[RMDB]
RNA sequence: GGGAACGACUCGAGUAGAGUCGAAAAAUAUGUGGCCAUAGCGCGAAUAUCAUUAUCGGCCAGCGCGGUCAGGCUGGCGACAACGUCCGCCAUCGGGCCGGAUGCCGUUGCUGCUUCGGAAUGCCCGCGGCGCAGAUAGGAAAAGAGCGUGUCCUCGGAGCUACUAGAUAUUCGUAUCUAGUAGCUCAAAAGAAACAACAACAACAAC
Reactivity to 2A3 in 0.01 (KOAc 150mM, MgCl2 10mM, bicine 150mM(pH8.5), 24C), signal-to-noise 4, nucleotides 027 to 156: a000u180a090u180g050u090g050g020c020c000a070u110a090g020c040g020c020g040a050a010u120a050u110c100a100u070u170a050u110c020g050g010c010c000a090g010c130g010c040g010g020u110c030a020g050g000c010u060g020g000c020g020a030c010a130a070c040g010u030c020c010g000c010c000a090u230c090g010g030g020c090c010g000g010a050u080g030c000c000g060u040u090g030c070u040g000c000u040u060c030g060g080a180a090u140g020c010c000c000g000c000g010g000c030g000c010a010g030a040u050a070g020g100a050a120a040a040g060a030g020c010g010u050g020u050c000c020u040c040g200
Reactivity to DMS in 0.01 (KOAc 150mM, MgCl2 10mM, bicine 150mM(pH8.5), 24C), signal-to-noise 2, nucleotides 027 to 156: a080u000a070u020g030u000g010g030c020c030a110u010a120g000c040g080c010g000a110a140u000a100u000c050a100u000u000a050u000c050g030g030c030c020a090g040c000g000c030g050g000u000c070a080g020g000c030u010g030g000c050g000a010c030a090a100c020g040u000c030c000g010c000c000a220u010c110g010g000g000c120c050g040g010a080u000g030c010c030g020u010u000g030c020u000g000c020u000u010c050g040g030a080a120u010g000c000c000c050g000c000g000g010c060g030c020a050g000a090u000a040g000g020a080a050a130a110g010a190g030c030g010u000g030u000c000c030u000c050g030

The record gives the reactivity of an RNA of 207 nucleotides to 2A3 and DMS. For 2A3, 2,331 sequencing reads were counted. Values cover nucleotides 27 to 156. DMS adducts were read by reverse transcription with MarathonRT. The data come from the RNA Mapping Database (RMDB), library OK3TST. The reactions ran in a buffer of 150 mM KOAc, 10 mM MgCl2 and 150 mM bicine (pH 8.5), at 24 C. The DMS profile rests on 4,315 reads.